RNA sequence: GGGAACGACUCGAGUAGAGUCGAAAAGGCCUACCAGGUGAGCAAAGGCCACAAGAUCCGGCUGACCGUGGAACUGGCUGACCAUGACGCUGAGGUCAAAUGGCUCAAGAAUGGCCAGGAGAUCCAGGACUGCUUGAGAAUUCGUUCUCAAGCAGUCAAAAGAAACAACAACAACAAC
Reactivity to DMS in 0.01 (KOAc 150mM, MgCl2 10mM, bicine 150mM(pH8.5), 24C), signal-to-noise 3, nucleotides 027 to 126: g040g000c000c010u000a220c010c040a140g010g040u010g020a050g010c010a030a090a090g030g040c300c130a070c180a120a080g040a080u010c030c050g000g000c010u000g010a030c070c010g000u000g030g000a040a070c170u030g020g020c020u000g010a150c010c000a050u010g000a080c230g010c000u010g010a070g010g000u010c020a000a280a120u000g000g020c000u000c100a100a130g000a110a070u010g010g000c000c020a020g000g010a300g010a000u000c010c020a050g010
Reactivity to 2A3 in 0.01 (KOAc 150mM, MgCl2 10mM, bicine 150mM(pH8.5), 24C), signal-to-noise 2, nucleotides 027 to 126: g020g000c010c000u010a020c010c010a030g000g020u050g050a010g000c050a110a300a210g020g010c040c030a080c060a060a050g020a100u020c010c000g020g000c020u070g090a010c010c050g140u080g010g000a110a150c170u010g000g000c000u010g000a040c020c020a080u090g030a020c070g010c150u030g030a060g070g000u000c000a000a000a020u010g000g000c040u080c210a030a120g160a210a190u170g030g000c000c000a020g010g000a030g000a000u000c010c000a010g000